Structure probing data (2A3 and DMS) for a 177-nucleotide construct. 2A3 adducts were read by reverse transcription with SuperScript II with manganese. Source: RMDB library OK2TST, as collected in RNAgym. The reactions ran in a buffer of 150 mM KOAc, 10 mM MgCl2 and 150 mM bicine (pH 8.5), at 24 C.
[RMDB]
RNA sequence: GGGAACGACUCGAGUAGAGUCGAAAAUGGCACAACAUCAUGGACUGUUGGAGACUGGAGUGGUUACAAAUCAAUGUGUUGCGGCAAGGUUUGCAAACCAUCCACUAUAGUAGUGGGUGAAGUGAAACACGAAAGAGACGUUCGCGUCUCUUUCGUGAAAAGAAACAACAACAACAAC
Reactivity to 2A3 in 0.01 (KOAc 150mM, MgCl2 10mM, bicine 150mM(pH8.5), 24C), signal-to-noise 1, nucleotides 027 to 126: u110g030g010c070a020c010a020a050c000a030u130c010a040u080g110g000a010c040u040g090u070u050g050g000a030g020a050c050u030g080g010a050g090u090g030g050u120u070a050c000a030a130a040u060c020a000a040u080g070u020g030u050u040g050c000g000g000c010a030a130g000g080u000u070u120g050c010a030a040a000c040c000a000u050c000c050a000c010u080a060u120a270g270u080a000g000u040g000g020g020u000g010a030a000g090u000g010a020a090a020
Reactivity to DMS in 0.01 (KOAc 150mM, MgCl2 10mM, bicine 150mM(pH8.5), 24C), signal-to-noise 2, nucleotides 027 to 126: u000g000g020c060a100c050a010a080c060a060u000c070a100u000g000g000a070c100u000g000u000u000g020g020a130g020a100c080u000g000g000a060g020u000g010g000u000u010a070c120a070a060a050u010c070a060a050u000g020u000g020u000u000g010c080g010g000c030a060a110g000g000u000u010u000g050c090a060a180a090c130c000a010u000c000c010a020c000u010a080u010a140g030u010a030g020u000g000g010g030u000g000a040a090g010u000g000a040a120a130